[RMDB]
RNA sequence: GGGAACGACUCGAGUAGAGUCGAAAAGCCUAACAGUUCGCUGUUAGGCAAAUGCACAGACUUCGCAACAGUGAAAAACACAACAGAAGUGUCUAUGCGAGGAUCGUUGCGUCUUCGGACGCAACAAACUACGGGACUGUUUCGACAGUCCCGUAGUAAAAGAAACAACAACAACAAC
Reactivity to 2A3 in 0.01 (KOAc 150mM, MgCl2 10mM, bicine 150mM(pH8.5), 24C), signal-to-noise 2, nucleotides 027 to 126: g000c000c000u000a010a000c000a010g040u070u080c150g070c110u000g000u000u020a000g000g000c000a000a040a000u090g000c000a030c000a050g060a070c020u030u020c010g000c020a070a060c020a170g040u070g180a080a010a020a030a000c030a020c020a100a150c050a130g210a240a030g120u010g020u070c040u080a040u030g010c000g010a010g040g020a120u130c110g000u010u020g000c010g010u000c010u010u040c170g060g010a010c000g020c000a000a000c010a010a020
Reactivity to DMS in 0.01 (KOAc 150mM, MgCl2 10mM, bicine 150mM(pH8.5), 24C), signal-to-noise 2, nucleotides 027 to 126: g010c000c000u020a000a010c000a000g010u010u000c140g040c000u020g000u010u000a010g000g010c010a030a010a020u000g020c070a050c080a050g000a060c010u000u000c020g030c170a080a120c240a070g020u000g010a120a100a080a120a120c020a000c050a050a100c130a110g000a020a040g010u000g040u000c030u000a100u000g000c000g020a060g000g000a120u000c090g000u000u000g010c010g000u000c000u010u030c100g000g000a010c000g000c000a000a000c010a010a080